[RMDB]
RNA sequence: GGGAACGACUCGAGUAGAGUCGAAAAUGAAGCUUAGAGAAUUAUGUAACUUGUCCAAAGUCACAUGGUCAGUAGGUUAUGAAGCCAAUAUUUGAACCCUGCUUGACUGCAGAAUGUUCUUUUAACAAUUAUGCUCUACUUCUUAUGGCCAUACAUAACCCCAGUGCGCAUUCGUGCGCACUGGGGUAAAAGAAACAACAACAACAAC
Reactivity to DMS in 0.01 (KOAc 150mM, MgCl2 10mM, bicine 150mM(pH8.5), 24C), signal-to-noise 2, nucleotides 027 to 156: u010g040a050a100g050c050u010u010a110g000a130g000a060a090u000u000a060u010g020u010a000a040c030u000u000g000u020c100c240a100a040a100g010u000c020a030c070a040u000g010g020u000c020a080g020u000a080g020g010u010u000a050u000g020a030a090g050c030c050a040a150u000a080u000u000u020g020a050a070c080c130c000u000g000c010u000u020g030a210c080u000g040c060a030g000a100a040u000g010u000u000c000u000u000u000u020a050a040c030a080a140u000u000a040u000g000c000u000c010u000a040c000u000u000c020u010u000a090u000g030g000c020c030a090u000a030c060a110u000a000
Reactivity to 2A3 in 0.01 (KOAc 150mM, MgCl2 10mM, bicine 150mM(pH8.5), 24C), signal-to-noise 3, nucleotides 027 to 156: u050g000a010a020g050c060u060u060a010g010a020g030a170a110u200u100a090u180g040u050a030a030c030u040u000g040u050c040c040a020a000a020g020u040c050a030c010a130u050g010g000u010c020a030g040u020a010g000g040u130u150a080u160g080a020a000g030c030c040a110a080u090a110u090u140u100g040a020a030c040c000c000u010g000c010u100u120g100a070c060u050g000c000a020g080a200a040u050g020u020u050c000u010u080u030u060a070a020c040a020a030u140u060a030u140g020c010u020c010u020a030c000u030u000c000u090u130a140u140g050g000c020c000a020u080a120c100a020u050a050
Annotation: An RNA of 207 nucleotides, treated with DMS and 2A3 and read out base by base. The data come from the RNA Mapping Database (RMDB), library OK3TST. DMS adducts were read by reverse transcription with MarathonRT. Conditions: 150 mM KOAc, 10 mM MgCl2 and 150 mM bicine (pH 8.5), 24 C.